An RNA of 207 nucleotides, treated with DMS and 2A3 and read out base by base.
For DMS, 1,875 sequencing reads were counted.
It was measured as part of the RMDB library OK3TST.
Conditions: 150 mM KOAc, 10 mM MgCl2 and 150 mM bicine (pH 8.5), 24 C.

[RMDB]
RNA sequence: GGGAACGACUCGAGUAGAGUCGAAAAACAUACAAACCUGCGAACAAUGGCAUGACAUGGACACAUCAGGCACCGUCCGGGUGUGUAUAUACCGGCAUUAUUGUUCAGGAUACCGGCUCAAACUCUGCCGAUAACAUUGGUGGCGUAUAUUACAGACAGCGAUAUAUUGUUUCGACAAUAUAUCGCUAAAAGAAACAACAACAACAAC
Reactivity to DMS in 0.01 (KOAc 150mM, MgCl2 10mM, bicine 150mM(pH8.5), 24C), signal-to-noise 1, nucleotides 027 to 156: a050c070a180u000a140c070a080a040a110c000c000u000g080c030g010a030a060c070a040a080u000g020g100c020a070u020g070a080c010a090u000g040g000a090c020a030c020a010u000c000a040g000g010c030a300c250c210g000u000c000c010g000g030g000u000g040u000g050u000a040u010a160u000a050c000c000g030g070c020a090u000u000a030u000u010g000u010u030c020a140g000g010a170u000a020c000c000g040g000c020u020c070a120a050a090c110u010c090u010g010c000c000g010a050u010a020a090c080a230u010u000g030g000u000g010g020c040g050u010a040u000a010u000u000a190c050a140g000a220c140
Reactivity to 2A3 in 0.01 (KOAc 150mM, MgCl2 10mM, bicine 150mM(pH8.5), 24C), signal-to-noise 3, nucleotides 027 to 156: a000c020a010u130a040c040a000a140a030c000c000u060g030c120g070a000a010c040a040a070u050g060g000c090a060u080g070a090c050a110u110g030g020a010c010a010c000a010u020c040a030g010g000c030a040c300c100g190u160c000c010g030g010g000u010g000u000g020u020a000u000a020u030a170c000c030g000g020c020a020u030u050a020u020u200g010u020u010c030a020g010g010a020u060a070c050c000g000g040c060u060c110a030a070a090c050u040c040u090g000c000c000g070a060u050a130a080c110a180u040u090g020g020u060g010g000c020g000u070a040u020a050u100u130a040c040a060g140a040c070